[RMDB]
RNA sequence: GGGAACGACUCGAGUAGAGUCGAAAAGCCCGAAAGUUCGCUUUCGGGCAAAAGAAAGCUCCUGCGGGAGCAAAGCUCACGCAGAAAAACAGUGCAAAAGCAAAAGUACCGUGUUCGCACGGUACAAGUAUCUAUAGUUCUUCGGAACUAUAGAUACAAAAGAAACAACAACAACAAC
Reactivity to 2A3 in 0.01 (KOAc 150mM, MgCl2 10mM, bicine 150mM(pH8.5), 24C), signal-to-noise 3, nucleotides 027 to 126: g000c000c020c000g010a000a010a000g030u110u230c250g010c190u000u000u000c000g000g020g000c000a000a000a010a010g000a010a050a020g040c020u040c010c000u060g000c050g010g050g030a030g000c060a180a110a040g000c000u000c000a020c010g010c000a000g100a120a080a030a010a010c060a040g090u090g100c040a050a100a090a150g010c010a020a070a080a110g020u010a000c010c000g000u010g030u050u080c220g020c100a000c010g020g000u000a000c000a000a000
Reactivity to DMS in 0.01 (KOAc 150mM, MgCl2 10mM, bicine 150mM(pH8.5), 24C), signal-to-noise 2, nucleotides 027 to 126: g000c000c000c000g000a020a020a010g020u000u020c300g020c010u020u010u000c010g020g010g020c010a010a020a050a070g000a180a190a230g010c050u000c090c000u010g000c040g010g010g000a020g000c010a020a030a130g010c000u000c040a030c050g030c000a030g000a080a110a080a070a070c220a060g000u010g020c110a040a120a110a050g010c080a120a100a130a130g010u000a010c000c000g020u000g010u010u000c270g030c000a020c000g000g000u000a000c000a010a110